Conditions: 150 mM KOAc, 10 mM MgCl2 and 150 mM bicine (pH 8.5), 24 C. This 207-nucleotide RNA was probed chemically with 2A3. Values cover nucleotides 27 to 156.
RNA sequence: GGGAACGACUCGAGUAGAGUCGAAAAUAGGCGGUUCGCCGCCUAAAAAAACCUUUGUGUAACGGGUGUAGGGAGAACAAUGGUGGGAUACCCCAUUGGGGGAGUUCGACGAUCUACACAUGUUACACUCUGGUAAAAACCAAGCUUCGGCUUGGAAACUAAGUUUUCUGUUCGCAGAAAACUUAGUAAAAGAAACAACAACAACAAC
Reactivity to 2A3 in 0.01 (KOAc 150mM, MgCl2 10mM, bicine 150mM(pH8.5), 24C), signal-to-noise 2, nucleotides 027 to 156: u080a010g000g000c020g020g020u020u050c160g060c090c020g000c020c020u060a090a000a000a000a000a010a010c000c000u010u010u010g000u000g000u000a010a010c020g080g000g000u000g000u010a010g000g010g000a010g020a020a020c050a100a140u130g080g040u180g030g070g070a170u220a130c050c030c010c030a110u120u190g030g000g000g030g030a090g010u000u010c030g050a170c000g000a110u000c000u000a000c000a000c000a000u010g000u010u000a000c000a000c000u000c000u000g000g010u070a070a030a030a060a050c010c000a010a020g000c000u020u140c270g110g000c020u010u010g020g000a050a000